Chemical mapping of a 177-nucleotide RNA with DMS and 2A3. For DMS the reverse transcriptase was MarathonRT. The reactions ran in a buffer of 150 mM KOAc, 10 mM MgCl2 and 150 mM bicine (pH 8.5), at 24 C. Reactivities are rounded to 0.1 and cut off at 0 and 3. High 2A3 reactivity points to a flexible backbone, as in loops and unpaired stretches.
RNA sequence: GGGAACGACUCGAGUAGAGUCGAAAAGAGGCUGCAGGGCCGAAGGGAUGGAAAACUGCAUGCUGGUUUCUGGCUGAGGCUGAGGGCCUGCAGAGGACAAGGACACCAGGUACUUGUCUCAGGUGUCAUGAUCUCGAUCAUUCGUGAUCGAGAUCAUAAAAGAAACAACAACAACAAC
Reactivity to DMS in 0.01 (KOAc 150mM, MgCl2 10mM, bicine 150mM(pH8.5), 24C), signal-to-noise 3, nucleotides 027 to 126: g000a170g000g010c020u000g000c020a030g010g030g000c010c010g010a190a130g000g000g010a140u010g010g000a060a040a080a090c080u000g000c090a080u020g010c060u000g020g020u000u000u000c010u010g000g020c040u000g010a180g020g010c020u000g010a210g000g000g000c000c010u000g010c060a030g010a130g010g000a060c110a060a050g010g000a040c030a100c080c060a110g000g020u010a090c050u000u010g000u010c020u000c160a070g000g010u010g020u000c080
Reactivity to 2A3 in 0.01 (KOAc 150mM, MgCl2 10mM, bicine 150mM(pH8.5), 24C), signal-to-noise 1, nucleotides 027 to 126: g070a000g030g000c020u000g010c030a000g010g030g090c000c080g020a000a070g090g050g020a020u150g030g000a080a100a070a040c020u080g060c040a100u220g060c050u080g000g120u000u060u030c050u040g050g000c050u060g040a050g140g000c020u070g040a050g030g020g100c030c000u000g000c000a010g030a050g040g040a010c020a030a030g040g000a000c010a010c080c050a020g100g040u070a040c020u020u070g040u060c010u020c050a000g080g000u050g030u090c010